[RMDB]
RNA sequence: GGGAACGACUCGAGUAGAGUCGAAAAGAUAUGGAGCAUCGUGUAAUCGUUGAAACUAGAUCGGAAACGAUCUAGUGGAGAUUGCACGAGUGCUCCUAAGUCAAAGCUAGGGCUUCGGCCCUAGCAACACGUUGAUACUGUUCGCAGUAUCAACGUGAAAAGAAACAACAACAACAAC
Reactivity to DMS in 0.01 (KOAc 150mM, MgCl2 10mM, bicine 150mM(pH8.5), 24C), signal-to-noise 4, nucleotides 027 to 126: g010a040u000a300u010g010g000a010g040c000a090u000c010g010u000g010u000a000a000u000c000g020u010u000g010a220a130a020c000u000a010g000a010u000c000g020g000a110a120a160c000g010a020u000c000u000a010g000u000g010g000a040g010a020u010u000g010c000a020c020g000a030g010u000g020c000u000c020c000u000a010a040g010u000c040a110a120a180g000c000u000a000g000g000g010c000u000u010c300g050g020c000c000c000u000a000g010c010a060a080
Reactivity to 2A3 in 0.01 (KOAc 150mM, MgCl2 10mM, bicine 150mM(pH8.5), 24C), signal-to-noise 2, nucleotides 027 to 126: g050a020u100a060u230g000g000a000g020c000a000u030c000g000u000g010u030a040a010u020c070g170u300u060g010a010a000a000c000u000a000g010a000u000c010g060g010a070a060a060c010g010a010u000c000u000a000g010u000g000g000a010g000a010u000u000g000c000a000c000g010a010g000u010g000c000u000c000c000u000a020a010g010u000c060a120a040a020g000c000u010a010g000g000g000c010u080u150c300g140g010c000c000c000u010a000g000c010a000a000
Chemical mapping of a 177-nucleotide RNA with DMS and 2A3. Source: RMDB library TTRDES, as collected in RNAgym. Conditions: 150 mM KOAc, 10 mM MgCl2 and 150 mM bicine (pH 8.5), 24 C.